[RMDB]
RNA sequence: GGGAACGACUCGAGUAGAGUCGAAAAUGAUGUAUCGGUUAUGUUGUCAAAUUGAAGCAACAUCAGUAUUUAUAUUGGAAUUCUGCUACGGACAAUGUGUUCGCAUUGCUAGGGCUAUACGAGGAGAUAAUGCGAUACUAUUCGUAGUAUCGCAUUAAAAAGAAACAACAACAACAAC
Reactivity to DMS in 0.01 (KOAc 150mM, MgCl2 10mM, bicine 150mM(pH8.5), 24C), signal-to-noise 9, nucleotides 027 to 126: u010g010a090u000g010u000a040u000c070g030g000u010u000a030u010g010u000u010g010u000c080a070a100a200u010u010g010a140a170g010c010a030a030c040a020u000c030a050g000u000a040u000u000u000a060u010a110u030u000g010g010a070a070u000u000c040u000g010c020u000a050c110g010g000a120c030a060a050u010g010u000g010u010u000c130g010c030a020u000u000g010c040u010a070g010g000g000c030u000a050u010a050c070g000a100g000g000a110g010a130
Reactivity to 2A3 in 0.01 (KOAc 150mM, MgCl2 10mM, bicine 150mM(pH8.5), 24C), signal-to-noise 5, nucleotides 027 to 126: u120g050a030u130g020u060a030u070c050g000g040u110u050a020u030g020u030u000g070u060c030a110a180a250u190u220g060a090a010g000c010a000a010c000a010u030c010a000g050u030a040u050u130u010a210u020a130u140u140g090g050a040a040u060u030c030u040g030c010u020a050c060g040g020a030c050a050a040u060g040u020g060u160u170c080g010c030a010u000u040g020c010u040a050g030g020g000c020u010a010u010a080c040g030a040g100g040a070g020a050

An RNA of 177 nucleotides, treated with DMS and 2A3 and read out base by base. For DMS, 18,469 sequencing reads were counted. For 2A3 the reverse transcriptase was SuperScript II with manganese. The 2A3 profile rests on 5,519 reads.